[RMDB]
RNA sequence: GGGAACGACUCGAGUAGAGUCGAAAACACUAUGUGUAACUAAAACGUAGCCACAGAAAUCAAAACGCGGUGGAACCAAGGAUGUGUAAAUCCAGUGGUUUUACAAAAAACACGUGCUUGGAGCACGGAAAAAGACGUGUGGCCCUGGCCCCUUGGACAUACCUCCUAUGUUCGCAUAGGAGGUAUGAAAAGAAACAACAACAACAAC
Reactivity to DMS in 0.01 (KOAc 150mM, MgCl2 10mM, bicine 150mM(pH8.5), 24C), signal-to-noise 4, nucleotides 027 to 156: c040a080c030u010a070u010g020u000g010u010a090a210c070u010a070a050a110a110c080g040u000a080g020c000c020a070c040a120g000a090a090a110u000c100a070a080a110a120c070g010c090g000g050u010g000g000a040a040c020c010a160a190g010g010a050u040g020u000g010u000a060a130a090u000c000c000a110g010u000g040g010u000u000u000u000a080c030a010a050a050a090a100a090c110a090c010g020u000g030c020u000u010g040g040a240g020c000a030c010g000g020a040a040a070a130a080g010a100c040g020u000g000u000g010g000c000c020c060u000g000g000c020c000c020c030u000u000g010g030a280
Reactivity to 2A3 in 0.01 (KOAc 150mM, MgCl2 10mM, bicine 150mM(pH8.5), 24C), signal-to-noise 6, nucleotides 027 to 156: c040a020c050u140a170u120g070u020g020u130a170a040c050u120a120a090a070a060c070g090u040a030g020c000c000a020c010a040g110a050a140a030u140c100a080a090a080a070c080g020c060g110g000u020g020g010a020a010c000c000a030a040g020g000a040u040g120u050g060u280a110a130a050u040c010c030a030g090u130g020g000u020u000u030u010a020c040a000a110a000a010a020a000c100a020c040g010u030g030c010u070u190g180g070a100g010c010a010c000g030g020a080a170a010a000a000g060a030c030g040u040g000u010g050g000c000c000c020u020g030g000c000c000c010c040u020u040g020g000a010